[RMDB]
RNA sequence: GGGAACGACUCGAGUAGAGUCGAAAAAGCAUGUGUUUCGGGGGCAGGCAUGGCUACAUAAAGCUAGAGAAGUGGGUCGAAGUGGGGCGUAAAGCAAGGACGGUCCAAGGGCGAGUCGACCUCUCCAUCGGCACGAGGACGUGCCUGGUUUUGAGUGCCUAUGGACAGGGUUCGCCCUGUCCAUAGGAAAAGAAACAACAACAACAAC
Reactivity to 2A3 in 0.01 (KOAc 150mM, MgCl2 10mM, bicine 150mM(pH8.5), 24C), signal-to-noise 1, nucleotides 027 to 156: a010g090c040a030u080g040u030g030u070u140u030c010g000g000g000g040g000c010a000g000g020c040a040u020g000g040c000u030a030c020a140u170a050a080a000g010c030u080a010g020a000g010a170a000g020u140g040g030g000u030c100g000a040a000g030u030g000g030g000g000c010g040u150a110a130a010g000c070a050a050g040g040a010c070g010g040u020c010c020a040a040g020g000g000c000g000a000g030u010c000g000a090c020c000u010c000u000c030c030a170u110c080g010g000c070a000c080g010a040g000g050a030c040g010u010g020c000c010u010g000g010u080u000u010u000g010a030g000u050g030